RNA sequence: GGGAACGACUCGAGUAGAGUCGAAAAAAAGGCUUAUCAAGAGAGGUGGAGGGACUGGCCCGAUGAAACCCGGCAGCCAGAAAUGGUGUCAAUUCCUGCAGCGGAAACGUUGAAAGAUGAGCCGAAAGAUUCUACAUUGGUUCGCCAAUGUAGAAUCAAAAGAAACAACAACAACAAC
Reactivity to DMS in 0.01 (KOAc 150mM, MgCl2 10mM, bicine 150mM(pH8.5), 24C), signal-to-noise 2, nucleotides 027 to 126: a030a070a100g000g000c010u010u000a030u000c010a140a130g030a150g000a150g000g000u000g000g010a050g030g010g000a250c130u000g030g000c010c010c000g010a070u010g000a060a150a030c060c010c020g000g010c040a040g000c000c010a010g000a100a070a100u000g000g020u010g020u000c050a010a040u000u000c020c010u010g000c010a020g000c020g000g000a060a080a090c020g020u000u000g010a070a080a130g010a010u000g020a030g020c000c000g010a080a060a110
Reactivity to 2A3 in 0.01 (KOAc 150mM, MgCl2 10mM, bicine 150mM(pH8.5), 24C), signal-to-noise 1, nucleotides 027 to 126: a030a010a020g000g000c020u030u020a020u020c030a110a000g050a000g000a050g060g000u030g000g000a000g050g000g000a030c040u070g100g010c000c020c000g090a200u050g020a000a010a040c010c010c000g000g000c050a030g270c000c000a020g050a040a010a000u020g020g050u020g010u020c000a030a010u050u020c020c000u090g040c010a010g010c000g000g000a020a030a010c000g000u010u030g020a050a040a020g000a000u000g000a010g010c010c010g000a000a010a000
An RNA of 177 nucleotides, treated with DMS and 2A3 and read out base by base. Reactivities are rounded to 0.1 and cut off at 0 and 3. The DMS profile rests on 1,122 reads. Reactivities are given for positions 27 through 126. DMS adducts were read by reverse transcription with MarathonRT. For 2A3 the reverse transcriptase was SuperScript II with manganese. It was measured as part of the RMDB library 15KREP. The RNA was probed in 150 mM KOAc, 10 mM MgCl2 and 150 mM bicine (pH 8.5) at 24 C.